This 177-nucleotide RNA was probed chemically with DMS and 2A3. It was measured as part of the RMDB library TTRDEL. The RNA was probed in 150 mM KOAc, 10 mM MgCl2 and 150 mM bicine (pH 8.5) at 24 C. For 2A3, 5,434 sequencing reads were counted.

RNA sequence: GGGAACGACUCGAGUAGAGUCGAAAAGAUAUGGAUAUGUAAACUACCAUGUGAGCGUUGAAAUCGGAAACGAUGGAGCUCCAUGGCAAGUACAUAUCCUAAGUCAAAAGCAACCUUCGGGUUGCAAUCAUGGUGUUUAGUUCGCUAAACACCAUGAAAAAGAAACAACAACAACAAC
Reactivity to DMS in 0.01 (KOAc 150mM, MgCl2 10mM, bicine 150mM(pH8.5), 24C), signal-to-noise 3, nucleotides 027 to 126: g000a040u000a300u000g000g000a020u000a010u000g000u010a040a000a080c000u010a070c000c000a020u000g000u030g010a000g030c000g010u010u030g000a080a110a010u000c010g010g010a150a110a190c010g000a010u000g000g000a130g000c000u000c000c000a000u010g000g000c000a000a000g010u000a010c000a000u000a000u000c000c000u000a010a070g010u010c020a090a100a120a150g000c010a020a010c000c010u000u010c220g020g010g010u000u000g000c010a050a030
Reactivity to 2A3 in 0.01 (KOAc 150mM, MgCl2 10mM, bicine 150mM(pH8.5), 24C), signal-to-noise 2, nucleotides 027 to 126: g020a010u070a030u180g000g000a000u000a000u020g020u020a020a040a020c010u000a010c000c000a010u040g190u290g050a000g000c030g220u300u080g030a040a040a000u000c000g000g030a070a050a000c020g000a000u030g010g010a010g000c010u000c010c000a000u000g030g000c010a010a010g000u000a000c000a000u000a000u000c000c000u000a030a020g030u000c020a000a070a080a150g000c010a000a010c000c000u050u090c300g160g000g010u000u030g000c010a000a050